Chemical mapping of a 177-nucleotide RNA with 2A3 and DMS. For 2A3, 11,023 sequencing reads were counted. Values are in units of 0.01, from 0 to 300, in steps of 10. Reactivities are given for positions 27 through 126.

RNA sequence: GGGAACGACUCGAGUAGAGUCGAAAAGGCGACAAGUUCGCUUGUCGCCACGGGGUCCAGCCUGGAAAGCCUGGAGGUAUUGGAAUGGUCGGGCCGCCAUUCAACGCGGGACAUUCGUGUCCCGCAAGGUAUCUAAAAUCUUCGGAUUUUAGAUACCAAAAGAAACAACAACAACAAC
Reactivity to 2A3 in 0.01 (KOAc 150mM, MgCl2 10mM, bicine 150mM(pH8.5), 24C), signal-to-noise 5, nucleotides 027 to 126: g010g010c000g010a000c010a010a000g010u040u080c170g040c130u000u000g000u000c000g000c000c000a000c020g010g000g000g010u010c000c000a000g020c020c020u090g090g170a190a080a010g020c010c010u020g020g020a020g020g020u140a180u150u300g150g010a000a000u010g010g000u020c020g010g010g000c010c000g000c000c000a000u020u020c020a040a030c100g000c000g000g000g000a000c000a010u030u070c170g060u030g000u010c000c000c000g000c000a000a000
Reactivity to DMS in 0.01 (KOAc 150mM, MgCl2 10mM, bicine 150mM(pH8.5), 24C), signal-to-noise 4, nucleotides 027 to 126: g020g000c000g020a010c000a010a000g010u010u010c220g010c010u000u000g000u000c000g020c000c000a020c150g010g010g000g000u000c010c000a010g020c120c010u000g020g020a090a110a040g000c280c000u000g010g010a030g000g000u010a100u000u000g000g000a030a020u000g000g010u000c020g010g000g000c000c020g000c010c010a010u000u000c020a130a120c200g010c000g010g000g010a020c000a050u000u010c190g020u010g010u000c000c000c000g020c020a000a010